[RMDB]
RNA sequence: GGGAACGACUCGAGUAGAGUCGAAAAGAUAUGGAGAAGGACAACAGCGAUUAGUCGGAAACGACUGGGUCGACAUGUCCCUCCUAAGUCAAAGAUGUUUAUCCUACUUCGGUAGGAUAAACAUCAAGAAAACAUAUUCGUUCGCGAAUAUGUUUUCAAAAGAAACAACAACAACAAC
Reactivity to 2A3 in 0.01 (KOAc 150mM, MgCl2 10mM, bicine 150mM(pH8.5), 24C), signal-to-noise 4, nucleotides 027 to 126: g010a020u070a030u110g020g010a030g050a280a250g050g000a010c010a150a050c050a170g140c010g000a010u030u050a030g000u000c000g000g030a070a040a040c000g020a000c000u040g070g080g020u000c000g000a110c040a060u050g000u000c010c000c000u000c000c000u020a100a020g020u020c070a100a020a150g000a000u010g010u000u000u000a000u010c000c000u000a020c010u050u070c230g140g000u000a000g040g000a000u010a000a000a000c000a000u000c000a000a010
Reactivity to DMS in 0.01 (KOAc 150mM, MgCl2 10mM, bicine 150mM(pH8.5), 24C), signal-to-noise 5, nucleotides 027 to 126: g000a040u000a300u010g000g000a020g010a140a100g020g000a020c010a030a110c200a210g000c010g000a010u000u000a020g010u010c000g000g000a090a080a130c010g010a010c000u010g020g020g010u000c000g010a070c090a200u000g000u000c000c010c000u000c000c000u000a030a090g000u000c030a080a150a130g000a010u000g010u000u000u000a000u000c000c000u000a000c000u000u010c170g030g010u010a000g000g000a000u000a000a000a000c000a000u000c000a060a130
Annotation:
This 177-nucleotide RNA was probed chemically with 2A3 and DMS. The data come from the RNA Mapping Database (RMDB), library TTRDEL. The reactions ran in a buffer of 150 mM KOAc, 10 mM MgCl2 and 150 mM bicine (pH 8.5), at 24 C. For DMS, 6,536 sequencing reads were counted.